[RMDB]
RNA sequence: GGGAACGACUCGAGUAGAGUCGAAAAAUCAGAGGGCGCUAUCAUGCAAACUAGGAUUGUCUGCUCAUGCACAGAACCAACUACCGAUGACUAACAGUGCAUGAAGGUUAGUUAUUCCAUAUUAAUUAAAACUCGUAAUUCUUCGGAAUUACGAGAACUCCCCUAUAGGGUUCGCCCUAUAGGGGAGAAAAGAAACAACAACAACAAC
Reactivity to DMS in 0.01 (KOAc 150mM, MgCl2 10mM, bicine 150mM(pH8.5), 24C), signal-to-noise 1, nucleotides 027 to 156: a120u000c080a100g010a260g110g000g050c190g040c080u000a090u000c050a070u010g040c040a110a160a090c020u010a120g080g000a080u080u010g000u000c020u000g020c010u000c060a080u010g000c000a060c030a090g050a110a070c110c000a100a100c070u010a300c090c040g020a130u000g000a130c100u000a070a100c080a120g000u000g020c050a060u000g000a050a180g040g000u010u000a030g020u000u000a020u000u000c030c020a170u000a250u010u000a030a090u000u000a030a110a170a170c000u000c000g030u000a000a010u000u000c000u020u020c300g020g020a030a010u000u000a000c000g020a060g000a020a030
Reactivity to 2A3 in 0.01 (KOAc 150mM, MgCl2 10mM, bicine 150mM(pH8.5), 24C), signal-to-noise 3, nucleotides 027 to 156: a000u030c030a020g050a050g080g030g000c000g010c030u100a130u300c080a060u280g010c020a010a000a050c020u030a020g000g030a030u040u020g030u070c010u040g020c000u030c000a000u010g020c000a000c010a010g050a170a070c020c040a060a100c030u080a100c080c040g090a060u040g030a010c000u020a050a000c020a020g010u010g030c000a010u010g020a030a030g070g000u010u020a000g010u010u020a020u180u140c040c000a030u090a070u280u180a100a060u090u090a080a090a020a070c000u000c000g010u000a000a010u000u000c000u000u040c140g070g000a000a000u010u010a000c000g000a000g000a000a000
Chemical mapping of a 207-nucleotide RNA with DMS and 2A3.
The 2A3 profile rests on 1,527 reads.
2A3 adducts were read by reverse transcription with SuperScript II with manganese.
The DMS profile rests on 1,406 reads.